Record summary: The record gives the reactivity of an RNA of 207 nucleotides to 2A3.
RNA sequence: GGGAACGACUCGAGUAGAGUCGAAAAGAUCUGGUUUCGUCGGUUCUUCGUCAGUCUCGAGACUUUCCUUCCAUCUAUUUUGCUCUUCUGUUUGUGCGCUAUUCUUUGUCUCGGUCACAGGGAUCAGAGCCUCCUCUUUAGCGCUAUCGUCCCCAUAUACCAUCGUACUGUUCGCAGUACGAUGGUAAAAAGAAACAACAACAACAAC
Reactivity to 2A3 in 0.01 (KOAc 150mM, MgCl2 10mM, bicine 150mM(pH8.5), 24C), signal-to-noise 2, nucleotides 027 to 156: g020a070u040c030u100g000g160u110u130u190c120g080u080c050g070g000u040u020c010u010u060c070g030u050c030a060g040u010c010u030c030g030a010g030a060c000u000u000u030c030c000u100u100c060c000a100u000c050u210a230u090u020u010u060g060c030u000c000u030u060c040u110g080u120u090u100g090u090g000c020g010c030u010a070u060u040c090u110u020u120g070u100c030u020c040g090g030u100c020a020c070a170g110g030g020a030u050c040a060g010a020g040c000c000u040c000c010u050c060u020u040u090a030g000c000g030c040u040a050u070c030g010u040c000c000c000c000a010u060a000
Record summary
The 2A3 profile rests on 730 reads.